[RMDB]
RNA sequence: GGGAACGACUCGAGUAGAGUCGAAAAGAUAUGGAAAUAGUUGCAUAUUGUCAGAGCACUCGGAAACGAGGCUCUUGGAUUUAUAUGGCACUCUAUUUCCUAAGUCAAACUCCAGUUCGCUGGAGAACUCUUCUUACAUCUUCGGAUGUAAGAAGAGAAAAGAAACAACAACAACAAC
Reactivity to 2A3 in 0.01 (KOAc 150mM, MgCl2 10mM, bicine 150mM(pH8.5), 24C), signal-to-noise 3, nucleotides 027 to 126: g020a020u060a040u090g010g010a000a000a000u000a010g030u040u050g000c010a020u060a040u120u160g020u010c010a000g000a010g000c070a250c300u000c000g000g000a020a060a030c000g010a000g000g010c010u000c000u020u120g020g000a000u080u300u050a110u020a060u110g300g020c010a010c050u130c000u000a000u000u000u000c000c000u020a090a020g000u000c030a100a040a110c000u010c010c010a000g030u060u120c300g040c080u000g010g000a000g020a010a010
Reactivity to DMS in 0.01 (KOAc 150mM, MgCl2 10mM, bicine 150mM(pH8.5), 24C), signal-to-noise 2, nucleotides 027 to 126: g010a020u000a300u000g000g000a020a020a010u000a020g010u000u000g000c000a040u000a010u000u010g010u000c000a030g000a000g010c010a160c000u000c000g000g010a070a060a180c000g000a010g010g000c000u000c000u010u000g010g010a030u000u000u000a010u020a010u010g000g020c020a020c150u000c010u000a010u000u010u000c000c000u000a020a100g000u000c020a110a110a190c010u000c000c000a010g000u010u020c250g010c000u000g000g000a030g000a040a080
An RNA of 177 nucleotides, treated with 2A3 and DMS and read out base by base. Conditions: 150 mM KOAc, 10 mM MgCl2 and 150 mM bicine (pH 8.5), 24 C. For 2A3, 4,986 sequencing reads were counted. Source: RMDB library TTRDEL, as collected in RNAgym.